[RMDB]
RNA sequence: GGGAACGACUCGAGUAGAGUCGAAAAGUUACCGGAAAGCUGCUCAUUGGUCCUGCUCCUUCACCGGGGUCGUCCAGGCCACGUCAACACCGAGCAGGCUGACGACAUGGACGGUGACCAGCCCGCGCUGGAGUAGCGAGUUCGCUCGCUACUCCAGAAAAGAAACAACAACAACAAC
Reactivity to DMS in 0.01 (KOAc 150mM, MgCl2 10mM, bicine 150mM(pH8.5), 24C), signal-to-noise 1, nucleotides 027 to 126: g010u030u000a020c030c050g010g000a190a150a250g010c140u000g000c090u000c000a110u000u000g000g000u000c100c030u000g040c060u000c000c050u000u000c190a110c210c000g000g000g000g000u000c050g030u040c110c130a150g030g010c020c040a020c130g000u000c070a040a090c150a150c090c100g020a040g030c040a040g000g000c070u000g000a020c040g000a060c000a070u000g000g000a290c010g000g000u000g000a010c000c060a160g000c000c000c020g000c180g000
Reactivity to 2A3 in 0.01 (KOAc 150mM, MgCl2 10mM, bicine 150mM(pH8.5), 24C), signal-to-noise 1, nucleotides 027 to 126: g010u020u000a050c030c000g020g020a170a080a000g070c080u100g000c040u070c030a050u040u060g000g140u300c030c000u000g040c020u040c020c000u070u110c070a050c030c060g030g000g000g040u030c020g050u110c060c050a030g010g000c000c000a040c010g030u080c040a100a130c010a000c050c040g020a000g000c000a000g000g000c000u040g020a010c000g020a000c000a020u100g010g000a000c000g010g000u020g040a010c000c000a050g050c030c070c000g000c030g000